[RMDB]
RNA sequence: GGGAACGACUCGAGUAGAGUCGAAAACUGAGAGUAGCACCACGUAUCAACUGGAUGGCAGCAACUUCUGGAAACAUUGGAUCAGCACAAGUGAUGGACAAUGUGGUUUACCACUUGUCGCACUCAGAUCGAGCCAUGAUUUCGAUCAUGGCUCGAUAAAAGAAACAACAACAACAAC
Reactivity to DMS in 0.01 (KOAc 150mM, MgCl2 10mM, bicine 150mM(pH8.5), 24C), signal-to-noise 2, nucleotides 027 to 126: c040u000g010a120g020a100g010u000a110g020c070a150c080c030a120c160g000u000a110u000c090a050a100c110u000g010g000a040u000g000g000c050a060g020c080a050a030c050u000u000c050u010g000g040a090a060a110c110a060u010u000g000g010a070u010c040a070g020c080a060c110a040a010g010u000g000a040u000g030g010a030c000a020a010u000g040u010g020g010u000u000u010a070c000c000a000c000u000u000g000u000c000g000c020a040c050u000c090a110g000
Reactivity to 2A3 in 0.01 (KOAc 150mM, MgCl2 10mM, bicine 150mM(pH8.5), 24C), signal-to-noise 1, nucleotides 027 to 126: c010u040g030a000g000a000g120u040a010g000c020a000c090c000a070c070g040u070a040u150c040a080a060c030u010g040g020a020u020g120g000c010a000g010c000a050a060c000u180u000c030u090g040g090a060a100a000c040a050u010u140g050g020a020u110c020a000g000c040a000c020a110a090g060u010g020a070u120g120g000a020c010a060a060u230g000u050g030g000u070u030u100a180c000c010a000c030u000u020g010u000c030g000c010a020c020u000c000a040g040
Source: RMDB library OK2TRN, as collected in RNAgym.
An RNA of 177 nucleotides, treated with DMS and 2A3 and read out base by base.
For 2A3 the reverse transcriptase was SuperScript II with manganese.
The DMS profile rests on 1,354 reads.
Values are in units of 0.01, from 0 to 300, in steps of 10.
Conditions: 150 mM KOAc, 10 mM MgCl2 and 150 mM bicine (pH 8.5), 24 C.